[RMDB]
RNA sequence: GGGAACGACUCGAGUAGAGUCGAAAAGAUAGAAAGAAAUUAGCUCGCCAGUUAGCGAGGUCUGUCCCCACACGACAGAUAAUCGGGUGCAACUCCCGCCCCUUUUCCGAGGGUCAUCGGAACCAAAAAAACUCAGGCAACUUCGGUUGCCUGAGAACAAAGUAUUGAACUUCGGUUCAAUACUUUGAAAAGAAACAACAACAACAAC
Reactivity to DMS in 0.01 (KOAc 150mM, MgCl2 10mM, bicine 150mM(pH8.5), 24C), signal-to-noise 2, nucleotides 027 to 156: g010a300u010a110g020a110a160a110g030a110a100a190u020u010a230g000c070u000c020g020c020c020a300g070u000u000a050g020c010g010a050g050g010u010c010u000g010u000c000c030c010c270a140c090a200c170g010a070c010a020g000a030u000a120a060u000c010g040g030g030u010g020c040a120a300c020u010c010c050c000g020c020c010c010c000u000u000u000u010c010c010g010a020g010g020g030u000c050a020u000c050g010g020a030a080c170c020a020a010a060a080a070a050a120c040u000c000a010g010g000c030a020a050c010u000u010c300g050g010u000u000g010c000c000u010g000a010g030a050a100
Reactivity to 2A3 in 0.01 (KOAc 150mM, MgCl2 10mM, bicine 150mM(pH8.5), 24C), signal-to-noise 3, nucleotides 027 to 156: g030a020u190a040g060a030a150a020g060a050a140a090u170u070a100g030c000u010c010g010c010c040a160g150u160u170a020g020c010g000a000g010g000u000c010u000g020u020c020c020c060c010a040c000a010c050g020a000c010a000g010a020u020a040a070u090c000g000g000g010u010g000c010a000a010c030u010c010c000c000g010c000c000c000c000u110u190u020u000c000c000g000a000g010g000g030u100c020a000u000c000g000g010a010a020c040c020a020a090a070a040a010a010a020c000u000c000a000g000g000c000a010a000c000u070u100c190g070g000u000u000g000c000c000u000g000a000g000a000a010